[RMDB]
Chemical mapping of a 207-nucleotide RNA with DMS and 2A3. 2A3 adducts were read by reverse transcription with SuperScript II with manganese. For DMS, 2,946 sequencing reads were counted. For DMS the reverse transcriptase was MarathonRT.

RNA sequence: GGGAACGACUCGAGUAGAGUCGAAAAACAGCAAAACUGAAAACGGAAGGCAAUCCUUCCACGACGAUACUUACUUUCCUUUGAUCGUCGUUACUACUGGCAUAGCCACAAAGGAGAACAAACAUGAGCGCGGACACUGACUUCGGUCAGUGUCCAAUCAUUACGGAUGGUUCGCCAUCCGUAAUGAAAAAGAAACAACAACAACAAC
Reactivity to DMS in 0.01 (KOAc 150mM, MgCl2 10mM, bicine 150mM(pH8.5), 24C), signal-to-noise 2, nucleotides 027 to 156: a080c030a030g010c030a080a050a110a300c030u000g010a090a060a120a110c040g020g020a060a000g040g030c130a120a140u000c020c010u010u000c000c010a120c020g000a040c000g010a030u000a000c090u020u010a030c090u000u000u000c020c020u010u000u000g000a030u000c040g010u000c010g040u010u000a050c050u010a070c040u000g020g040c040a110u000a100g020c010c040a140c040a000a090a060g000g000a120g040a100a150c140a040a100a090c060a050u000g010a110g010c060g020c120g000g000a030c000a000c000u000g020a020c000u010u000c280g000g000u000c000a000g030u000g040u000c000c000a000a030
Reactivity to 2A3 in 0.01 (KOAc 150mM, MgCl2 10mM, bicine 150mM(pH8.5), 24C), signal-to-noise 7, nucleotides 027 to 156: a000c040a010g070c070a010a050a030a120c060u130g040a070a060a040a040c080g010g000a000a010g040g010c180a050a150u260c000c000u000u010c000c010a010c000g000a000c000g000a000u080a180c010u080u040a040c020u070u120u070c020c000u040u020u050g020a020u020c000g000u000c000g010u030u050a040c050u020a020c010u010g020g000c060a270u090a090g020c010c010a030c060a030a040a010g050g010a030g020a070a040c060a080a120a020c040a110u190g100a060g090c100g010c070g020g000a000c000a000c000u010g000a010c000u020u050c170g000g010u000c010a000g000u000g010u000c000c000a000a000